[RMDB]
RNA sequence: GGGAACGACUCGAGUAGAGUCGAAAAGAACGAAUUUUAGAAUUGACCGAUGAGGAAGAUUAUGAAUAUAACCUGUAUCUGGAUAAAGAGUGUUACAAGAAAGAGUCGCUCAUUCUGAACCUCCGAAGGUACCUGGACUAUUCGUAGUCCAGGUACCAAAAGAAACAACAACAACAAC
Reactivity to DMS in 0.01 (KOAc 150mM, MgCl2 10mM, bicine 150mM(pH8.5), 24C), signal-to-noise 2, nucleotides 027 to 126: g020a040a060c060g040a090a060u000u000u020u000a060g000a010a040u030u000g000a300c010c000g010a050u050g010a300g020g020a090a290g000a030u000u000a010u000g000a040a090u000a060u010a010a110c030c120u000g000u000a040u000c020u000g010g000a250u000a000a020a030g010a050g000u000g010u020u040a070c040a030a010g020a040a020a010g000a080g000u020c100g000c030u000c000a060u020u000c020u010g010a080a100c080c020u010c010c060g000a090a050
Reactivity to 2A3 in 0.01 (KOAc 150mM, MgCl2 10mM, bicine 150mM(pH8.5), 24C), signal-to-noise 3, nucleotides 027 to 126: g020a010a030c020g000a050a090u010u020u110u180a140g020a100a010u040u060g030a010c020c040g080a110u170g020a060g030g060a050a000g000a010u020u020a020u240g040a030a020u170a030u050a160a020c000c000u020g050u140a130u070c050u050g050g010a020u110a070a090a060g010a010g060u050g040u190u130a000c030a050a040g090a130a110a000g040a160g090u090c000g030c090u000c020a090u080u000c010u050g100a120a120c000c030u010c050c010g020a030a030
Background:
An RNA of 177 nucleotides, treated with DMS and 2A3 and read out base by base. Reactivities are given for positions 27 through 126. Conditions: 150 mM KOAc, 10 mM MgCl2 and 150 mM bicine (pH 8.5), 24 C. The DMS profile rests on 1,991 reads.